This 177-nucleotide RNA was probed chemically with DMS. The reactions ran in a buffer of 150 mM KOAc, 10 mM MgCl2 and 150 mM bicine (pH 8.5), at 24 C. Values cover nucleotides 27 to 126.
RNA sequence: GGGAACGACUCGAGUAGAGUCGAAAACAACACCUCAGCCAAGGCAGUACCACAUACCACCCCCACAGAGGAUCACAAUCCGGGAAGAUCUCUCCGCAAGGUCAGCAAUGGAUGAAGCUGGUGAGCCGAGAGAACUCUAGUUCGCUAGAGUUCUCUCAAAAGAAACAACAACAACAAC
Reactivity to DMS in 0.01 (KOAc 150mM, MgCl2 10mM, bicine 150mM(pH8.5), 24C), signal-to-noise 2, nucleotides 027 to 126: c120a100a150c140a120c010c000u010c120a090g010c030c050a100a050g020g000c030a070g000u000a010c080c070a080c130a030u000a040c050c040a140c000c010c010c030c030a060c130a060g000a120g000g000a020u000c090a090c180a070a140u000c050c050g000g030g030a090a070g000a040u000c020u000c020u000c050c070g030c070a060a060g040g040u000c040a040g000c070a030a080u030g000g010a040u000g000a100a110g020c030u000g000g010u010g000a070g000c130c120